[RMDB]
RNA sequence: GGGAACGACUCGAGUAGAGUCGAAAAACUAUGAUAUACGUAUCAUAGAAGCCGAUGAGGACCGUUAGCCACGCUGAGGAUGAUGAUAAGAGGGUUAGCCGAGGACAGGCUGGUACGCCAGCCUGAAGUUGUUCGUACGGUUCGCCGUACGAACAACAAAAGAAACAACAACAACAAC
Reactivity to DMS in 0.01 (KOAc 150mM, MgCl2 10mM, bicine 150mM(pH8.5), 24C), signal-to-noise 1, nucleotides 027 to 126: a100c000u010a000u030g000a000u000a070u020a080c190g010u000a000u000c010a000u070a030g000a180a100g010c050c010g090a120u020g010a050g010g010a080c000c010g000u020u000a100g000c040c010a110c170g050c070u030g000a080g010g050a050u000g020a050u000g000a040u000a070a020g000a050g040g000g000u000u050a100g010c000c080g000a100g000g000a140c040a030g000g150c000u050g000g040u010a100c260g000c010c000a000g000c020c000u000g000a020a040
Reactivity to 2A3 in 0.01 (KOAc 150mM, MgCl2 10mM, bicine 150mM(pH8.5), 24C), signal-to-noise 2, nucleotides 027 to 126: a000c000u000a000u000g020a010u010a000u000a050c260g030u020a000u010c000a000u000a000g020a040a030g050c030c000g000a060u100g060a070g020g050a020c000c030g050u020u030a050g020c000c000a050c020g050c040u070g030a020g110g030a090u050g030a010u010g000a000u030a170a010g030a050g070g040g010u000u080a020g020c020c010g030a060g000g060a030c000a000g000g020c000u010g000g000u020a020c180g020c070c000a000g000c030c010u010g000a020a000
This 177-nucleotide RNA was probed chemically with DMS and 2A3. DMS adducts were read by reverse transcription with MarathonRT. The reactions ran in a buffer of 150 mM KOAc, 10 mM MgCl2 and 150 mM bicine (pH 8.5), at 24 C. The 2A3 profile rests on 1,055 reads.